[RMDB]
RNA sequence: GGGAACGACUCGAGUAGAGUCGAAAAACUGAUACCUUACGAGGUAUCAGAAUGACCUCGUGGUAGAGCGCCACGAACGGAAAAUAAAGAAAGCUCGAUUGAAACGCACCGUGUACGCACGGUGCGAAAAAGUCGAUCCAGUUCGCUGGAUCGACAAGAGUAAUUACUCCUUCGGGAGUAAUUACUCAAAAGAAACAACAACAACAAC
Reactivity to 2A3 in 0.01 (KOAc 150mM, MgCl2 10mM, bicine 150mM(pH8.5), 24C), signal-to-noise 1, nucleotides 027 to 156: a000c000u010g010a000u000a020c010c000u030u060a040c260g110a030g020g000u000a000u000c000a000g010a010a040u120g030a060c000c000u010c010g010u010g020g040u030a160g000a000g030c000g010c000c000a000c030g000a030a010c010g050g030a120a000a110a130u090a030a020a010g130a040a080a000g010c060u010c000g050a070u060u260g080a140a130a000c000g000c020a010c000c070g020u040g000u080a010c140g000c130a000c010g020g120u020g000c000g000a000a000a000a000a000g000u010c010g010a000u000c000c000a000g030u050u120c110g130c240u000g000g030a000u000c000g000a000c000a000a000